Structure probing data (2A3 and DMS) for a 177-nucleotide construct. The reactions ran in a buffer of 150 mM KOAc, 10 mM MgCl2 and 150 mM bicine (pH 8.5), at 24 C. For 2A3 the reverse transcriptase was SuperScript II with manganese.

[RMDB]
RNA sequence: GGGAACGACUCGAGUAGAGUCGAAAAGCGCAUCGAAAAGAUGGAGCAAGACGGAAAGUACGGAAACGUCGAACGUACGAAGCGCUACGAAAAGUAGGAGCACAUGGAAAACAUGGAAAAAGAAAAAGGGAUAUCUUUACUUCGGUAAAGAUAUCCCAAAAGAAACAACAACAACAAC
Reactivity to 2A3 in 0.01 (KOAc 150mM, MgCl2 10mM, bicine 150mM(pH8.5), 24C), signal-to-noise 2, nucleotides 027 to 126: g030c000g010c010a020u000c040g140a180a110a000a040g020a030u070g010g070a020g000c040a030a080g040a090c080g100g040a210a110a040g030u070a000c020g000g070a130a080a000c080g170u100c100g050a160a020c010g000u010a010c010g050a060a000g060c050g000c100u040a000c040g060a130a020a150a010g010u050a000g000g070a060g040c020a030c010a060u000g000g070a130a120a190a000c000a000u050g050g060a050a140a000a060a000g210a030a070a060a060a030
Reactivity to DMS in 0.01 (KOAc 150mM, MgCl2 10mM, bicine 150mM(pH8.5), 24C), signal-to-noise 2, nucleotides 027 to 126: g050c020g030c000a060u000c010g000a080a190a050a200g010a010u010g010g000a170g080c140a030a080g000a090c040g000g000a100a170a170g000u010a060c060g000g000a050a200a070c000g000u020c090g040a120a020c040g100u010a070c100g000a110a050g040c120g000c010u000a010c040g000a010a060a120a170g000u010a010g000g010a110g000c010a080c000a020u000g050g000a090a030a120a190c080a000u000g000g010a010a000a150a100a050g070a020a100a140a090a100